[RMDB]
RNA sequence: GGGAACGACUCGAGUAGAGUCGAAAAUACACUUUACGUGUGCUGGUUUCAUUACUUUGUCCCAAACCAGGCACGCGUAAUUAAAGGCCAGUUUGGCCAGGUCCGCGUAAUCGAUGGUCACCAAUAAGGUAACCAAGAGUUUCGACUCUUGGUUACCAAAAGAAACAACAACAACAAC
Reactivity to DMS in 0.01 (KOAc 150mM, MgCl2 10mM, bicine 150mM(pH8.5), 24C), signal-to-noise 2, nucleotides 027 to 126: u010a080c090a070c120u000u000u000a000c010g040u000g030u000g020c010u010g000g000u000u000u000c110a100u020u000a110c110u000u010u020g000u030c040c030c030a040a040a000c000c010a030g030g010c000a020c010g000c020g010u000a000a010u000u000a080a090a070g000g050c030c000a070g030u000u000u000g030g030c020c010a080g010g000u000c020c030g040c050g020u000a080a070u000c030g000a070u000g000g000u000c080a090c070c080a050a070u000a080a120
Reactivity to 2A3 in 0.01 (KOAc 150mM, MgCl2 10mM, bicine 150mM(pH8.5), 24C), signal-to-noise 1, nucleotides 027 to 126: u100a020c080a030c020u000u000u000a000c000g000u010g000u000g000c000u000g000g000u000u060u030c040a060u080u180a100c070u180u160u170g070u150c010c030c020a020a000a000c030c000a040g110g030c010a000c000g000c000g000u030a000a010u020u050a110a030a000g010g030c020c030a060g100u080u130u060g040g010c010c020a010g000g020u000c030c030g000c000g100u060a050a130u140c020g030a100u110g010g000u000c050a020c040c050a020a040u090a160a080
The record gives the reactivity of an RNA of 177 nucleotides to DMS and 2A3. DMS adducts were read by reverse transcription with MarathonRT. It was measured as part of the RMDB library M2PK90. The DMS profile rests on 1,294 reads.